[RMDB]
RNA sequence: GGGAACGACUCGAGUAGAGUCGAAAAUGUCAAUUUUGUGCAGUCGCGUUAGCUUCUCCCUUGUUAAAUGUGAAUGAGAUGGUUGUUAAUGCAACACAACCGCCAAGAGACUCGUAUUUCUCGGGAAUGACCCAUACGGUUUCGACCGUAUGGGUCAAAAAGAAACAACAACAACAAC
Reactivity to DMS in 0.01 (KOAc 150mM, MgCl2 10mM, bicine 150mM(pH8.5), 24C), signal-to-noise 1, nucleotides 027 to 126: u000g010u020c110a110a090u000u010u030u010g020u020g020c020a100g010u000c100g030c080g000u010u000a070g010c030u000u010c030u020c160c020c060u000u000g000u000u000a040a060a040u010g090u020g010a130a070u000g000a060g010a050u000g020g000u010u010g010u000u000a050a070u010g020c130a110a070c140a030c030a030a040c080c040g000c060c020a080a120g000a150g010a050c010u000c030g010u010a070u000u020u000c010u000c020g030g000g010a050a110